[RMDB]
RNA sequence: GGGAACGACUCGAGUAGAGUCGAAAACCCGUAAGUUCGCGAUAAGGGAUGCCUGCCUCGCAAUGAGGCAGGUCGCAGUGACUCGGAGGCUCCGACUGUCUAAUAACAACAUAGGUGACCGCAAAUCAAUAUGUAUAAGCUUCGGCUUAUACAUAUUAAAAGAAACAACAACAACAAC
Reactivity to DMS in 0.01 (KOAc 150mM, MgCl2 10mM, bicine 150mM(pH8.5), 24C), signal-to-noise 9, nucleotides 027 to 126: c000c000c000g010u020a080a080g010u000u010c060g010c050g020a100u020a090a100g010g000g010a100u010g000c000c000u000g000c010c000u000c000g010c220a140a090u040g010a010g000g010c000a000g000g010u000c060g020c050a080g020u010g000a080c040u000c060g000g010a180g010g010c020u000c020c010g000a100c110u000g000u000c040u020a090a080u020a110a070c180a080a060c080a050u010a090g010g010u000g010a100c030c020g010c140a070a070a090u030c120
Reactivity to 2A3 in 0.01 (KOAc 150mM, MgCl2 10mM, bicine 150mM(pH8.5), 24C), signal-to-noise 7, nucleotides 027 to 126: c010c000c000g010u060a070a040g030u040u100c050g010c030g040a050u050a150a100g080g060g030a030u120g010c000c000u010g010c010c010u010c010g080c240a070a150u300g000a000g000g010c000a000g000g000u000c000g000c000a010g010u010g040a020c010u000c040g110g010a040g050g030c020u000c010c010g040a050c040u020g010u020c000u020a090a080u100a160a040c100a030a000c020a070u110a050g000g050u020g060a120c000c010g030c060a060a070a040u140c040
An RNA of 177 nucleotides, treated with DMS and 2A3 and read out base by base.
The data come from the RNA Mapping Database (RMDB), libraries RFM100 and RFMREP.